Record summary
Chemical mapping of a 207-nucleotide RNA with 2A3. The 2A3 profile rests on 521 reads.
[RMDB]
RNA sequence: GGGAACGACUCGAGUAGAGUCGAAAACAAAAGCUGUCUCUACCACAAAAACGAAGCCCAGUUGCUGCGUACCCAGGACGACGCGGAGGCGCUGCUCAACAAGUACUGCCAGAGUCUGGUGGAACCUGAAGAGUGAGGAUGUCCAAGGAGAUCCCCAGGUGUACGACAUAUUCGUAUGUCGUACACCAAAAGAAACAACAACAACAAC
Reactivity to 2A3 in 0.01 (KOAc 150mM, MgCl2 10mM, bicine 150mM(pH8.5), 24C), signal-to-noise 1, nucleotides 027 to 156: c110a070a150a000a010g110c030u050g070u000c000u000c020u060a060c000c050a050c150a120a030a030a030a000c100g000a000a020g030c000c010c010a040g040u080u070g050c050u070g000c000g040u090a180c010c050c040a040g040g100a030c040g000a010c020g000c040g090g040a030g040g010c000g000c010u020g000c000u080c060a010a120c000a000a130g030u040a080c030u020g070c010c010a070g080a080g300u100c180u090g000g000u000g020g050a040a110c000c010u010g050a130a000g050a070g120u140g050a050g020g020a130u070g040u020c010c000a040a090g070g030a070g000a130u000c020c000c000c000a030